[RMDB]
RNA sequence: GGGAACGACUCGAGUAGAGUCGAAAAGAAGCGCACGCCAGAAGAUCACGUUUGGCAUGUUUUCGCAAAUCAGCUUUGAGGUGGCAGGAUGAUACGUUUAUCAGACUUCGAUCGCCACUGCUUAACCGGGCAGUUCGGCGAAAAGCCAGUGAUGUGCGUAUGCUGACGUAUUCGUACGUCAGCAUACAAAAGAAACAACAACAACAAC
Reactivity to DMS in 0.01 (KOAc 150mM, MgCl2 10mM, bicine 150mM(pH8.5), 24C), signal-to-noise 3, nucleotides 027 to 156: g010a110a100g010c060g010c040a030c050g020c040c030a140g000a080a100g000a110u010c100a110c070g020u000u000u000g010g010c020a090u010g000u020u000u010u000c060g010c040a050a070a100u010c090a120g020c030u000u000u020g010a090g030g040u000g010g050c050a100g000g020a100u010g010a060u000a060c090g010u000u010u010a110u010c060a020g010a070c040u000u010c020g010a100u000c020g000c010c020a100c000u000g020c020u000u010a150a130c240c140g020g000g000c000a060g000u000u000c060g050g020c000g030a000a020a020a040g020c020c010a100g000u000g020a050u000g020u000g000c120
Reactivity to 2A3 in 0.01 (KOAc 150mM, MgCl2 10mM, bicine 150mM(pH8.5), 24C), signal-to-noise 5, nucleotides 027 to 156: g040a040a020g040c040g000c020a000c020g060c030c030a040g040a100a020g060a090u060c030a030c150g030u030u080u060g010g000c040a020u090g040u010u070u030u050c040g020c030a100a090a040u080c030a040g030c040u080u140u300g040a040g010g030u020g040g000c000a010g090g010a020u040g010a010u050a080c130g040u070u100u030a100u070c020a010g040a080c010u060u040c050g100a080u010c000g000c000c000a050c000u010g000c000u090u060a130a120c070c040g020g000g000c000a020g010u110u150c080g050g000c000g000a030a000a000a010g030c010c000a020g000u030g020a050u040g000u020g020c030
Source: RMDB library OK3TST, as collected in RNAgym. This 207-nucleotide RNA was probed chemically with DMS and 2A3. The reactions ran in a buffer of 150 mM KOAc, 10 mM MgCl2 and 150 mM bicine (pH 8.5), at 24 C. For DMS the reverse transcriptase was MarathonRT. As a SHAPE reagent, 2A3 marks flexible, mostly unpaired nucleotides at the ribose 2'-OH.